Structure probing data (2A3 and DMS) for a 177-nucleotide construct. DMS (dimethyl sulfate) methylates the pairing face of unpaired adenines and cytosines. It was measured as part of the RMDB library OK2TST. DMS adducts were read by reverse transcription with MarathonRT. The RNA was probed in 150 mM KOAc, 10 mM MgCl2 and 150 mM bicine (pH 8.5) at 24 C.
RNA sequence: GGGAACGACUCGAGUAGAGUCGAAAAACAGCUGCUGGAAGGCGAAUUCCUCGGACUUUACGGCGAGAAAGUAAACGUAACAUGAUGACGACAAUUCUGACGAUUCAUGUUCCUUCAACGCCGGGGCAUCGAUACAGACUUUCGAGUCUGUAUCGAUAAAAGAAACAACAACAACAAC
Reactivity to 2A3 in 0.01 (KOAc 150mM, MgCl2 10mM, bicine 150mM(pH8.5), 24C), signal-to-noise 3, nucleotides 027 to 126: a000c040a030g040c010u090g000c040u050g060g100a090a010g020g000c010g030a040a070u070u020c000c030u020c070g060g030a070c040u090u100u090a050c080g040g030c010g030a030g080a070a050a010g080u150a060a090a080c170g050u090a010a010c010a010u010g020a010u050g050a050c060g010a010c050a100a140u300u060c080u140g000a020c020g010a000u000u010c010a010u020g020u000u020c000c000u030u030c050a130a070c050g000c000c000g000g000g000g030c020
Reactivity to DMS in 0.01 (KOAc 150mM, MgCl2 10mM, bicine 150mM(pH8.5), 24C), signal-to-noise 4, nucleotides 027 to 126: a120c100a160g010c050u000g000c040u010g000g030a100a090g010g010c040g000a090a130u010u000c030c010u000c090g030g020a080c060u000u000u000a140c040g020g000c010g020a170g000a080a030a100g010u020a050a060a110c170g010u000a010a010c020a010u000g000a010u010g010a250c300g010a100c060a030a110u010u010c140u000g010a120c030g000a270u000u010c000a020u000g000u000u000c010c010u000u010c060a090a070c050g000c000c040g000g000g000g020c300